This 177-nucleotide RNA was probed chemically with DMS and 2A3.
For DMS the reverse transcriptase was MarathonRT.
[RMDB]
RNA sequence: GGGAACGACUCGAGUAGAGUCGAAAAGAGUAGUAGUUCGCUACUACUCAAAGGCACAAAAGGCACAGUUCUAAAGUGCAUGGAACACGCCAAGUGCCCGUGAAAGUAAAUCCUUCGGGAUUUACAACAGAUUGUGUGACUUCGGUCACACAAUCUGAAAAGAAACAACAACAACAAC
Reactivity to DMS in 0.01 (KOAc 150mM, MgCl2 10mM, bicine 150mM(pH8.5), 24C), signal-to-noise 1, nucleotides 027 to 126: g000a000g000u000a000g000u010a020g000u010u020c170g020c000u000a000c000u000a010c000u000c000a020a020a100g010g000c000a010c000a100a080a150a190g000g000c000a260c180a190g000u000u000c010u010a020a030a160g010u020g000c250a120u000g010g000a000a020c020a100c140g000c040c000a100a300g000u000g000c000c000c070g000u020g010a110a040a100g000u000a000a010a000u000c000c000u000u000c180g040g000g000a000u020u000u000a000c000a100a110
Reactivity to 2A3 in 0.01 (KOAc 150mM, MgCl2 10mM, bicine 150mM(pH8.5), 24C), signal-to-noise 1, nucleotides 027 to 126: g020a030g010u000a010g000u010a000g020u020u060c160g060c130u000a000c000u010a010c000u000c000a000a030a010g000g000c020a010c010a060a160a080a110g000g000c010a050c040a080g050u040u000c010u050a090a140a170g290u300g160c030a010u120g000g000a010a020c000a010c050g000c020c000a020a000g060u010g010c000c000c000g100u100g160a140a050a000g020u000a020a010a010u010c000c020u000u090c090g060g000g000a000u000u060u000a000c000a000a010

High 2A3 reactivity points to a flexible backbone, as in loops and unpaired stretches. For 2A3 the reverse transcriptase was SuperScript II with manganese. For 2A3, 988 sequencing reads were counted. Values cover nucleotides 27 to 126. DMS (dimethyl sulfate) methylates the pairing face of unpaired adenines and cytosines. The RNA was probed in 150 mM KOAc, 10 mM MgCl2 and 150 mM bicine (pH 8.5) at 24 C.